[RMDB]
RNA sequence: GGGAACGACUCGAGUAGAGUCGAAAAGAAAACCGGCUAGACCGUGAUAGUUAACUGGUCAGAACGGGCGCUUGUCGCGUGCCGGGUCGGGGUUCAAUUCCCCGCCGCUAUCAAACAGCCGGAAAAAGGUCAUAGUCACUUUCGAGUGACUAUGACCAAAAGAAACAACAACAACAAC
Reactivity to 2A3 in 0.01 (KOAc 150mM, MgCl2 10mM, bicine 150mM(pH8.5), 24C), signal-to-noise 2, nucleotides 027 to 126: g060a000a100a000a000c000c000g030g020c040u030a060g000a110c070c040g070u040g000a000u000a010g020u050u030a030a010c040u090g060g200u160c050a020g040a010a020c000g000g000g040c000g050c000u290u290g210u280c070g010c000g000u110g300c000c000g000g000g010u040c030g010g000g000g000u000u020c000a000a000u060u030c010c000c000c000g000c060c000g000c040u030a040u010c000a070a000a030c000a070g010c000c000g050g000a040a000a000a000a000
Reactivity to DMS in 0.01 (KOAc 150mM, MgCl2 10mM, bicine 150mM(pH8.5), 24C), signal-to-noise 2, nucleotides 027 to 126: g020a050a040a030a190c010c000g000g000c000u010a000g000a010c060c070g000u010g000a000u060a040g000u000u070a050a040c100u040g000g000u010c100a100g030a170a160c050g110g000g010c010g030c000u140u000g040u040c260g000c000g000u000g000c000c000g010g000g000u000c050g040g000g010g000u060u060c130a000a300u000u000c000c000c000c000g040c020c010g000c090u000a000u000c000a040a110a000c180a060g000c000c040g010g000a000a060a090a100a030